[RMDB]
RNA sequence: GGGAACGACUCGAGUAGAGUCGAAAAAAAGAUUCUUUCAAAACUAUCAGGGAAAGAAGCGAGUACUAUUCACAGUAUUCUCAAAAUUAACCCAGUAACAUACGAAGAAAACGUUCUUUUUGAACAAAAAGAAGUACCAGAUUUGGCUAAAUGCAGAAAUAUGGUGUAUCUUCGGAUACACCAUAUUAAAAGAAACAACAACAACAAC
Reactivity to DMS in 0.01 (KOAc 150mM, MgCl2 10mM, bicine 150mM(pH8.5), 24C), signal-to-noise 1, nucleotides 027 to 156: a050a050a040g020a150u000u000c020u000u000u010c030a120a080a070a190c060u030a070u000c050a160g030g030g010a100a030a090g020a090a040g000c170g000a030g010u000a050c020u000a120u000u000c250a180c150a070g010u000a070u000u010c020u010c000a010a080a060a090u000u000a080a180c010c000c050a180g050u000a150a100c070a090u000a120c050g020a080a100g000a100a070a000a180c090g000u000u000c010u000u000u000u000u000g020a050a200c090a030a030a040a050a030g000a010a030g010u010a030c040c040a110g020a230u000u000u000g070g100c080u000a020a020a070u000g050c010a040g000a100
Reactivity to 2A3 in 0.01 (KOAc 150mM, MgCl2 10mM, bicine 150mM(pH8.5), 24C), signal-to-noise 1, nucleotides 027 to 156: a000a000a000g030a020u020u000c020u000u040u000c070a140a140a030a080c010u060a020u260c160a090g080g010g010a000a000a100g040a030a000g020c050g010a000g000u000a000c000u030a070u110u200c060a040c030a100g000u010a020u010u000c030u000c040a050a060a030a080u140u060a090a050c000c020c000a050g060u150a150a030c040a040u160a020c040g030a050a090g030a020a060a010a000c010g040u020u000c000u050u160u030u090u210g100a160a020c040a100a080a000a000a000g050a050a000g080u070a030c020c020a010g020a150u100u060u080g060g000c050u080a000a070a090u070g090c030a010g060a140